[RMDB]
RNA sequence: GGGAACGACUCGAGUAGAGUCGAAAACGACUGCGUUUCGACGCAGUCGAACAUUAUGUGGUGAAAUAUAAAAGCCCAAAUUCCGAUACCAUAUAAUUUAAAUUACCUACGAGUUCGCUCGUAGGAACAAUAUACCUAUCUUCGGAUAGGUAUAUUGAAAAGAAACAACAACAACAAC
Reactivity to 2A3 in 0.01 (KOAc 150mM, MgCl2 10mM, bicine 150mM(pH8.5), 24C), signal-to-noise 8, nucleotides 027 to 126: c010g000a000c000u000g010c010g010u020u020u130c180g020a010c010g000c010a000g010u000c000g000a000a000c000a010u030u040a020u030g010u030g000g020u070g110a080a220a010u260a040u070a120a160a030a030g030c010c010c000a020a070a050u150u030c080c040g060a060u070a180c000c010a010u030a010u010a050a030u060u130u230a180a260a180u140u140a130c000c000u000a000c000g000a010g020u060u070c160g100c070u010c000g000u000a000g000g000a000a000
Reactivity to DMS in 0.01 (KOAc 150mM, MgCl2 10mM, bicine 150mM(pH8.5), 24C), signal-to-noise 4, nucleotides 027 to 126: c030g010a000c000u000g010c000g010u000u010u020c180g020a040c000g020c010a010g000u000c000g000a090a080c140a050u010u010a010u000g030u000g010g020u000g000a070a070a080u010a070u000a060a060a110a140g010c020c000c010a060a080a110u010u000c090c050g010a130u010a020c000c000a010u000a010u000a020a010u010u000u000a050a070a120u020u000a110c000c000u000a000c000g000a010g000u000u010c200g010c000u000c000g030u000a010g000g000a030a070
Chemical mapping of a 177-nucleotide RNA with 2A3 and DMS. The RNA was probed in 150 mM KOAc, 10 mM MgCl2 and 150 mM bicine (pH 8.5) at 24 C. Source: RMDB library M2PK50, as collected in RNAgym. Values cover nucleotides 27 to 126. For 2A3 the reverse transcriptase was SuperScript II with manganese. The DMS profile rests on 5,392 reads.